[RMDB]
RNA sequence: GGGAACGACUCGAGUAGAGUCGAAAAGAUAUGGAGUGGUGAGGGAGUGCUAACUAUCGGAAACGAUAGAGCACUUUGAUCUCACGUAACAUCUCCUAAGUCAAAGGCGUCGGUUCGCCGACGCCAACCUCAGUUGGUAGUUCGCUACCAACUGAGGAAAAGAAACAACAACAACAAC
Reactivity to DMS in 0.01 (KOAc 150mM, MgCl2 10mM, bicine 150mM(pH8.5), 24C), signal-to-noise 2, nucleotides 027 to 126: g010a040u000a170u000g000g010a020g030u000g010g010u010g030a000g020g000g000a000g010u010g000c000u000a100a170c010u010a010u000c000g020g000a060a040a020c010g000a020u000a000g010a040g010c000a000c000u000u000u020g000a080u010c000u000c000a020c000g020u000a050a090c190a070u000c010u000c000c010u010a020a120g000u000c030a090a110a170g010g030c020g030u000c010g020g010u000u030c250g010c000c000g000a010c000g010c000c010a000a020
Reactivity to 2A3 in 0.01 (KOAc 150mM, MgCl2 10mM, bicine 150mM(pH8.5), 24C), signal-to-noise 2, nucleotides 027 to 126: g020a010u050a020u110g000g000a030g030u130g010g000u020g110a010g010g010g020a010g010u000g000c010u070a230a300c010u000a040u010c000g000g020a030a000a020c010g000a000u000a010g000a010g000c010a000c000u270u060u010g020a010u000c000u000c020a000c000g040u050a100a040c020a300u130c000u000c000c000u000a050a010g030u000c050a070a140a120g000g000c010g000u030c000g000g130u060u120c300g020c130c000g010a000c000g000c000c000a000a000

The record gives the reactivity of an RNA of 177 nucleotides to DMS and 2A3. For 2A3, 4,331 sequencing reads were counted. The RNA was probed in 150 mM KOAc, 10 mM MgCl2 and 150 mM bicine (pH 8.5) at 24 C. Values cover nucleotides 27 to 126. It was measured as part of the RMDB library TTRDEL.